[RMDB]
RNA sequence: GGGAACGACUCGAGUAGAGUCGAAAACUCCAAGAGUCGACAGUUCAUGUCCUGGAGAAAGGAGCGGUGACAGUACACUUCAGCACCGCGAGCCCACAGGCGAACUUCAUUGUAUCGCUGUGUGGUAUAGGUGGAUGAAAUUCGUUUCAUCCACCUAAAAAGAAACAACAACAACAAC
Reactivity to DMS in 0.01 (KOAc 150mM, MgCl2 10mM, bicine 150mM(pH8.5), 24C), signal-to-noise 5, nucleotides 027 to 126: c030u010c020c010a100a140g000a110g040u010c100g000a080c040a050g020u000u000c150a100u000g010u000c010c060u000g010g000a060g000a080a090a110g010g030a190g020c010g000g020u000g000a090c110a050g000u010a150c220a100c120u000u010c100a150g010c000a020c000c010g030c010g010a130g000c170c000c000a010c030a150g000g010c000g010a020a030c010u000u010c300a080u010u000g010u000a090u000c010g010c000u000g010u000g010u000g000g030u000a110
Reactivity to 2A3 in 0.01 (KOAc 150mM, MgCl2 10mM, bicine 150mM(pH8.5), 24C), signal-to-noise 4, nucleotides 027 to 126: c000u000c000c000a030a050g050a040g180u160c030g010a020c020a030g040u090u180c090a120u130g010u030c000c020u000g000g030a060g070a060a100a020g130g060a050g010c000g010g000u010g030a090c030a060g070u130a050c110a030c110u120u080c070a020g000c010a010c000c000g000c000g010a020g000c000c010c000a000c000a010g060g040c010g020a010a000c020u070u050c060a180u300u290g020u060a300u060c010g010c000u020g080u020g020u070g130g020u060a080